[RMDB]
RNA sequence: GGGAACGACUCGAGUAGAGUCGAAAAUUGGUUACACCAAGGAGGGUAGUGUGAUCAAUUUCUGUUACAUGCAUCAAAUGGAACUUGCUAAUGGUACACAUACCGGUUCAGCAUUUGAUGGUACUAUACAUUUGAGAACCUUCGGGUUCUCAAAUGUAAAAGAAACAACAACAACAAC
Reactivity to 2A3 in 0.01 (KOAc 150mM, MgCl2 10mM, bicine 150mM(pH8.5), 24C), signal-to-noise 2, nucleotides 027 to 126: u010u000g000g000u000u010a010c010a000c040c020a040a100g140g030a050g020g080g030u090a030g000u010g000u010g010a010u000c000a000a000u010u000u000c030u030g120u110u090a060c040a110u180g080c000a000u000c000a000a000a010u000g020g020a030a010c000u040u100g030c050u110a110a040u090g050g020u100a040c150a000c030a140u040a020c010c000g000g010u030u010c030a080g060c010a080u000u000u000g000a000u010g000g040u020a010c020u020a010u000
Reactivity to DMS in 0.01 (KOAc 150mM, MgCl2 10mM, bicine 150mM(pH8.5), 24C), signal-to-noise 1, nucleotides 027 to 126: u010u010g000g010u000u000a020c010a000c000c070a140a080g030g000a060g000g000g020u010a100g010u000g000u000g030a010u000c010a000a000u000u000u010c080u010g030u000u000a080c210a150u000g000c030a000u000c010a000a000a030u000g000g000a020a050c010u000u010g000c200u000a150a080u000g000g010u000a070c290a080c100a040u000a050c240c120g020g000u000u000c030a130g000c010a030u000u030u000g000a020u010g000g000u010a020c110u000a100u000